[RMDB]
This 177-nucleotide RNA was probed chemically with 2A3 and DMS. 2A3 adducts were read by reverse transcription with SuperScript II with manganese.
RNA sequence: GGGAACGACUCGAGUAGAGUCGAAAACGUUCAUCUGGACAUGAACUCCAUUUAGAUGGAAGGGAUGGGCAACUUCUUCUUGCUAUUUUACUUCAAAUGACAAUGUCCGAUUAUCCACCAUUGACCACUGGUCACCUACUUUCGAGUAGGUGACCAGAAAAGAAACAACAACAACAAC
Reactivity to 2A3 in 0.01 (KOAc 150mM, MgCl2 10mM, bicine 150mM(pH8.5), 24C), signal-to-noise 1, nucleotides 027 to 126: c060g040u020u000c000a040u000c120u170g070g020a030c040a120u030g070a060a040c040u110c050c000a000u090u100u090a220g000a120u010g030g000a010a050g100g000g030a000u050g010g010g060c000a010a050c010u190u150c010u070u050c010u050u100g030c020u050a110u160u200u040u110a180c040u060u080c050a000a060a120u060g050a040c000a040a050u070g010u000c000c000g050a030u070u010a050u070c020c050a080c020c000a050u000u050g060a030c000c030a090
Reactivity to DMS in 0.01 (KOAc 150mM, MgCl2 10mM, bicine 150mM(pH8.5), 24C), signal-to-noise 1, nucleotides 027 to 126: c170g000u000u020c010a040u010c020u010g040g010a080c070a060u000g000a040a130c110u000c140c000a040u010u000u000a140g000a070u010g000g030a060a010g000g020g000a060u010g050g000g060c030a030a010c120u000u000c070u020u000c200u000u000g010c040u010a060u000u000u000u000a140c090u000u010c100a040a010a070u040g000a200c080a040a070u000g000u000c000c010g000a120u000u010a090u010c030c030a150c010c000a070u000u000g000a130c110c110a240
DMS adducts were read by reverse transcription with MarathonRT. The DMS profile rests on 652 reads.